The record gives the reactivity of an RNA of 177 nucleotides to DMS. For DMS the reverse transcriptase was MarathonRT. Conditions: 150 mM KOAc, 10 mM MgCl2 and 150 mM bicine (pH 8.5), 24 C.
RNA sequence: GGGAACGACUCGAGUAGAGUCGAAAAGAUAUGGACCUCACGCGUACUCCCCACCGUCUGUAGGACUAUACUUUCGGAAACGAAAGUACGAAUCCUAUUGACGAGGUACGCGUGAGGUCCUAAGUCACACCAAUACACACUUCGGUGUGUAUUGGUGAAAAGAAACAACAACAACAAC
Reactivity to DMS in 0.01 (KOAc 150mM, MgCl2 10mM, bicine 150mM(pH8.5), 24C), signal-to-noise 2, nucleotides 027 to 126: g000a040u000a300u010g000g000a010c000c000u000c000a000c000g010c000g050u000a000c000u000c010c050c000c010a300c100c000g000u000c000u000g000u000a030g000g000a000c080u000a300u000a000c010u000u000u000c000g020g000a110a070a300c010g000a020a010a010g010u000a000c120g020a080a140u000c000c000u000a000u000u000g020a060c000g000a100g020g010u000a000c000g010c010g000u000g000a000g000g010u000c000c000u000a000a020g000u000c060a280